[RMDB]
RNA sequence: GGGAACGACUCGAGUAGAGUCGAAAACUACCAAAACCAAGGGCACAAGCAGAGUCAUUCCUGUCGACAAAUGGUGCUUACUUUAUGAAUAGACAGACACAGGUUGAAGAGUCAAAGGUGCAGGACACCUUACUAGUGGAUUCGUCCACUAGUAAGGAAAAGAAACAACAACAACAAC
Reactivity to DMS in 0.01 (KOAc 150mM, MgCl2 10mM, bicine 150mM(pH8.5), 24C), signal-to-noise 9, nucleotides 027 to 126: c090u010a180c070c050a070a060a090a110c090c090a080a120g010g010g010c030a040c080a090a110g010c080a090g010a060g010u000c040a070u000u000c030c010u000g020u000c060g010a090c110a050a060a080u010g000g010u000g010c060u010u010a070c080u000u000u000a060u020g010a070a060u010a090g000a060c070a060g000a100c080a040c050a040g010g010u000u000g010a070a070g010a100g010u010c050a040a070a060g000g010u000g000c040a050g000g010a130c230a120
Reactivity to 2A3 in 0.01 (KOAc 150mM, MgCl2 10mM, bicine 150mM(pH8.5), 24C), signal-to-noise 8, nucleotides 027 to 126: c030u080a080c010c030a030a060a010a030c030c030a050a090g020g020g000c020a030c010a070a040g050c050a030g030a020g070u020c000a020u090u000c020c010u040g060u070c030g030a050c040a030a130a060u130g070g000u060g050c010u070u090a060c020u070u150u090a130u130g050a050a030u060a090g050a030c040a020g040a020c020a000c010a070g060g040u080u090g060a100a040g020a010g070u040c020a000a050a040g060g000u060g020c010a010g030g030a020c010a040

This 177-nucleotide RNA was probed chemically with DMS and 2A3. For DMS the reverse transcriptase was MarathonRT. The DMS profile rests on 17,712 reads. The RNA was probed in 150 mM KOAc, 10 mM MgCl2 and 150 mM bicine (pH 8.5) at 24 C. For 2A3 the reverse transcriptase was SuperScript II with manganese.